[RMDB]
RNA sequence: GGGAACGACUCGAGUAGAGUCGAAAAGCGGACGACUAUCAAGCAUUAGCGAUAUUGCCGUUAUGGCAUCAUGAUGAUACGUAUUUAUUUGAUUUGCUUUUACGUAAAAUUGAAGAUAUGAUUUUACUACAGCCCUCUAAUUCGUUAGAGGGCUGUAAAAAGAAACAACAACAACAAC
Reactivity to DMS in 0.01 (KOAc 150mM, MgCl2 10mM, bicine 150mM(pH8.5), 24C), signal-to-noise 2, nucleotides 027 to 126: g010c080g000g020a070c030g000a100c140u000a010u000c060a040a100g000c040a040u000u020a080g040c170g030a040u040a100u010u000g010c010c000g000u040u170a050u090g020g050c020a090u000c060a000u010g000a020u010g000a050u000a020c160g000u030a010u050u000u030a070u000u010u000g000a070u000u010u000g000c050u000u000u000u030a060c080g000u000a000a000a010a030u010u000g000a160a140g000a090u060a100u060g000a000u010u020u030u000a000c020
Reactivity to 2A3 in 0.01 (KOAc 150mM, MgCl2 10mM, bicine 150mM(pH8.5), 24C), signal-to-noise 3, nucleotides 027 to 126: g080c080g010g050a120c020g050a050c060u000a070u000c000a170a040g050c050a090u000u140a010g030c050g150a080u040a160u100u190g000c000c000g070u150u150a090u300g040g000c000a000u100c050a000u040g040a010u030g010a020u000a070c100g040u070a100u010u200u060a150u020u110u150g190a260u000u000u070g020c030u040u060u020u060a090c090g000u040a010a010a010a010u030u140g020a140a040g060a090u060a100u300g040a050u000u020u010u010a010c000
Structure probing data (DMS and 2A3) for a 177-nucleotide construct.
The data come from the RNA Mapping Database (RMDB), library OK1LIB.
DMS adducts were read by reverse transcription with MarathonRT.